[RMDB]
RNA sequence: GGGAACGACUCGAGUAGAGUCGAAAAAUCAGGGAAAUGCCUCCCUUUGGUAAAUCUGCCUUAUCCUUCUUUACCUGGCAAAGAGCCAAUCAUGUUAACUCUUCCUUAUCAGCCUGUGGCCCAGAGACGUGAUAGCAUUGUUCGCAAUGCUAUCACGAAAAGAAACAACAACAACAAC
Reactivity to DMS in 0.01 (KOAc 150mM, MgCl2 10mM, bicine 150mM(pH8.5), 24C), signal-to-noise 2, nucleotides 027 to 126: a070u030c090a080g000g000g020a070a080a110u010g000c050c020u000c030c000c010u000u000u000g010g000u000a040a070a050u010c090u000g030c020c010u020u000a040u010c050c030u010u010c050u000u000u000a110c040c060u000g000g030c060a030a100a170g010a060g000c010c040a070a040u000c080a050u010g000u010u000a050a190c090u000c040u000u000c020c030u000u000a050u000c080a080g020c010c000u010g050u010g000g000c000c010c020a080g010a110g000a180
Reactivity to 2A3 in 0.01 (KOAc 150mM, MgCl2 10mM, bicine 150mM(pH8.5), 24C), signal-to-noise 1, nucleotides 027 to 126: a000u100c020a030g050g000g040a030a120a120u200g030c000c000u000c020c000c000u050u020u050g000g000u010a040a040a050u020c020u080g010c000c000u020u030a070u070c040c000u020u100c070u000u130u050a080c000c010u030g040g000c030a120a110a010g050a000g040c020c030a010a050u070c060a060u130g040u120u050a080a030c010u000c010u060u080c010c000u070u050a040u060c000a020g040c010c010u100g000u000g070g060c000c010c000a060g010a010g000a120
This 177-nucleotide RNA was probed chemically with DMS and 2A3. DMS adducts were read by reverse transcription with MarathonRT. Conditions: 150 mM KOAc, 10 mM MgCl2 and 150 mM bicine (pH 8.5), 24 C.